[RMDB]
RNA sequence: GGGAACGACUCGAGUAGAGUCGAAAAAAGACCACAUGGCGAGUAGGAGCACUAGAGAGGACCAGGGUAUGCAAAAUCCAAGAAAUUGAAGUGGAUCCAGGGGAUGAAGAUAGAGUCCAAUAUGUGAUGCGGAAUAAUAGUUCGCUAUUAUUCCGCAAAAAGAAACAACAACAACAAC
Reactivity to DMS in 0.01 (KOAc 150mM, MgCl2 10mM, bicine 150mM(pH8.5), 24C), signal-to-noise 1, nucleotides 027 to 126: a030a050g000a160c030c000a020c130a110u030g000g030c070g020a070g030u010a060g010g000a060g010c050a060c070u000a040g000a080g010a050g000g000a030c050c020a080g030g020g040u010a050u010g000c060a080a030a140a050u000c010c020a050a050g020a090a060a050u000u010g000a090a100g000u000g000g000a080u020c050c020a050g010g000g010g010a080u000g000a070a020g010a040u000a060g010a090g020u010c000c010a040a090u020a080u030g000u000g000a200